[RMDB]
RNA sequence: GGGAACGACUCGAGUAGAGUCGAAAAGGGGUCGAGUCCUCAGUACGAAUGUUGUCAGCGACUACAGGCUGAAGCCUCCACGGCCUGUAUUCGCUUGGAUUUACAUUCGGAACCGGACUCGACGGAGGCACCCAAAACAGCCAGUUCGCUGGCUGAACGGCAGAUUAAUCUUCGGAUUAAUCUGCCGAAAAGAAACAACAACAACAAC
Reactivity to 2A3 in 0.01 (KOAc 150mM, MgCl2 10mM, bicine 150mM(pH8.5), 24C), signal-to-noise 1, nucleotides 027 to 156: g120g020g000g000u020c000g020a000g000u040c000c010u000c000a000g000u000a000c000g020a000a000u010g000u050u020g050u120c040a020g020c010g000a010c000u000a000c000a000g010g020c020u020g080a210a040g050c020c080u010c010c070a040c070g000g000c010c000u020g010u000a000u020u010c000g000c000u010u070g030g020a000u000u210u250a010c000a000u000u010c000g000g000a000a010c010c000g000g000a000c000u000c000g010a000c030g000g020a010g020g000c060a050c000c010c030a040a040a010a010c000a000g000c030c000a020g010u100u160c180g050c120u000g010g000c000u000g000a060a010